[RMDB]
This 177-nucleotide RNA was probed chemically with 2A3 and DMS. Values cover nucleotides 27 to 126. For DMS the reverse transcriptase was MarathonRT. For 2A3 the reverse transcriptase was SuperScript II with manganese.

RNA sequence: GGGAACGACUCGAGUAGAGUCGAAAAAAUAUGCUCGACAGGCUGCCUGUCCGACAGAGCUUUUAGAUCUUCUGAUCUUUCCCUGCAGCAUAUGGCUUAUGCAUCAAGCGAUUGUCGGAUCACACAAACACUCGUCGUAAUUCGUUACGACGAGUGUAAAAGAAACAACAACAACAAC
Reactivity to 2A3 in 0.01 (KOAc 150mM, MgCl2 10mM, bicine 150mM(pH8.5), 24C), signal-to-noise 2, nucleotides 027 to 126: a000a020u140a050u050g000c000u030c030g050a030c040a040g060g000c040u000g060c000c020u030g010u020c000c010g000a010c000a010g030a000g000c010u050u020u000u030a000g000a010u020c020u260u060c200u300g000a010u000c000u040u010u020c000c000c000u020g080c040a000g000c010a030u070a060u180g150g030c040u090u090a100u150g010c030a040u050c060a070a010g030c020g150a190u000u150g000u040c000g040g010a050u080c040a040c000a020c030a060a140
Reactivity to DMS in 0.01 (KOAc 150mM, MgCl2 10mM, bicine 150mM(pH8.5), 24C), signal-to-noise 3, nucleotides 027 to 126: a050a100u000a030u000g000c000u000c070g020a110c160a070g000g020c050u000g000c050c110u020g010u000c020c010g010a000c030a050g000a200g010c040u000u000u000u000a020g000a000u000c000u000u020c290u010g010a030u010c010u000u000u000c000c000c020u010g020c100a050g020c020a040u000a040u000g000g000c080u020u000a040u000g050c050a090u010c100a080a000g040c020g000a110u010u010g010u000c020g000g020a050u000c200a110c120a060c200a090a080